[RMDB]
RNA sequence: GGGAACGACUCGAGUAGAGUCGAAAAAGCGCCUUCAGAGAGAGCCAAUCGGAGAAGCAUCUGUCACUUUCUUCGAGGCUCUCUCCAGGUGACUGGAGAGUGAGUGUCUGAGAAAUUGACAGAUGUUUCUCAGACAUACUCACUCUCUGAAGGCGCACGUUGCUAGUAUGUUCGCAUACUAGCAACGAAAAGAAACAACAACAACAAC
Reactivity to 2A3 in 0.01 (KOAc 150mM, MgCl2 10mM, bicine 150mM(pH8.5), 24C), signal-to-noise 2, nucleotides 027 to 156: a010g010c000g010c010c000u010u000c000a000g000a000g000a010g000a010g010c100c110a010a120u040c030g010g010a010g010a000a000g010c010a040u050c040u050g070u040c010a010c030u050u050u080c010u030u020c030g010a010g030g000c010u010c000u000c000u000c000c000a000g000g050u130g050a090c000u000g000g000a010g000a000g010u130g020a030g020u060g050u010c020u060g010a010g020a000a010a000u020u030g020a050c020a040g030a040u040g020u000u000u000c000u000c000a010g000a000c000a010u200a020c000u020c040a070c030u010c010u000c000u000g000a000a000g000g000c000g000c000a000